RNA sequence: GGGAACGACUCGAGUAGAGUCGAAAACUUGACCAGUCUUCUCGCCUAUUUGCGACGAAUACUGCGUCGUCAGGAUACACUUAUCGGGUAAAUAUGUCAGGAUAUGAACUCCUUGGCGGGUAGCAAACCAUGCUCCAAGUUUCGACUUGGAGCAUGGAAAAGAAACAACAACAACAAC
Reactivity to 2A3 in 0.01 (KOAc 150mM, MgCl2 10mM, bicine 150mM(pH8.5), 24C), signal-to-noise 2, nucleotides 027 to 126: c040u090u120g050a010c060c010a000g010u000c000u020u000c000u000c000g010c000c020u200a200u100u160u250g010c000g010a040c030g000a000a030u050a120c070u020g050c020g040u010c000g000u010c010a010g000g000a010u020a080c060a020c060u040u030a040u010c000g030g000g000u110a050a140a080u280a160u220g160u090c030a060g170g000a000u030a040u060g090a090a120c050u000c030c000u030u050g010g000c000g000g000g020u030a010g000c010a010a050a000
Reactivity to DMS in 0.01 (KOAc 150mM, MgCl2 10mM, bicine 150mM(pH8.5), 24C), signal-to-noise 2, nucleotides 027 to 126: c040u000u020g000a030c050c010a060g000u030c020u010u000c000u000c010g000c000c170u020a130u030u020u040g000c050g000a010c080g060a060a050u000a020c190u000g000c090g000u000c030g000u020c100a110g000g000a120u000a120c300a110c070u030u010a000u000c020g010g010g000u000a040a050a170u020a100u040g010u020c030a070g000g000a020u000a000u010g010a150a120c130u050c080c020u010u020g010g010c020g000g040g080u000a050g000c100a150a030a100
Chemical mapping of a 177-nucleotide RNA with 2A3 and DMS. For DMS, 2,455 sequencing reads were counted. Source: RMDB library OK1LIB, as collected in RNAgym. DMS adducts were read by reverse transcription with MarathonRT. For 2A3, 2,118 sequencing reads were counted. The reactions ran in a buffer of 150 mM KOAc, 10 mM MgCl2 and 150 mM bicine (pH 8.5), at 24 C. For 2A3 the reverse transcriptase was SuperScript II with manganese.